RNA sequence: GGGAACGACUCGAGUAGAGUCGAAAAGAACACGUCUCGGGACGACGCUAAACUCGCCCUGGUCGGGAUGGGUUUAACGACCCCUCGGGUUACCUAGUUCCUAAAACUAGGUGGUGGAGUCAUAUAAAAAACUUCUACACGUUCGCGUGUAGAAGAACUUCGUUCAUAUGUUCGCAUAUGAACGAAGAAAAGAAACAACAACAACAAC
Reactivity to 2A3 in 0.01 (KOAc 150mM, MgCl2 10mM, bicine 150mM(pH8.5), 24C), signal-to-noise 4, nucleotides 027 to 156: g060a080a020c060a010c040g010u010c010u010c000g020g040g010a130c300g020a030c030g060c210u010a000a010a000c000u010c010g020c010c000c000u060g050g050u060c050g000g050g020a110u110g050g040g000u020u040u090a090a030c040g020a020c000c000c000c020u030c010g050g000g000u030u040a000c000c000u000a000g000u030u070c050c080u130a080a060a020a020c000u000a020g000g000u000g010g030u060g030g040a050g030u080c100a040u080a010u270a160a060a010a010a020a050c000u000u000c000u010a010c000a010c000g030u050u040c160g000c000g100u010g000u000a000g000a000a000g000a000a000
Reactivity to DMS in 0.01 (KOAc 150mM, MgCl2 10mM, bicine 150mM(pH8.5), 24C), signal-to-noise 1, nucleotides 027 to 156: g020a080a100c000a100c000g000u010c010u000c010g030g010g030a020c020g010a160c000g020c060u010a070a080a110c150u000c000g010c030c000c000u010g000g000u030c090g000g060g000a040u010g020g020g010u000u010u000a070a110c100g000a130c020c020c040c040u000c030g030g020g000u000u000a030c000c000u000a040g000u000u000c080c080u010a070a080a020a040c000u000a000g010g040u000g000g010u010g020g000a090g000u000c050a100u000a160u050a000a050a030a070a080a170c000u000u000c000u000a020c010a020c000g040u000u000c300g060c030g000u000g000u010a010g000a010a010g000a020a030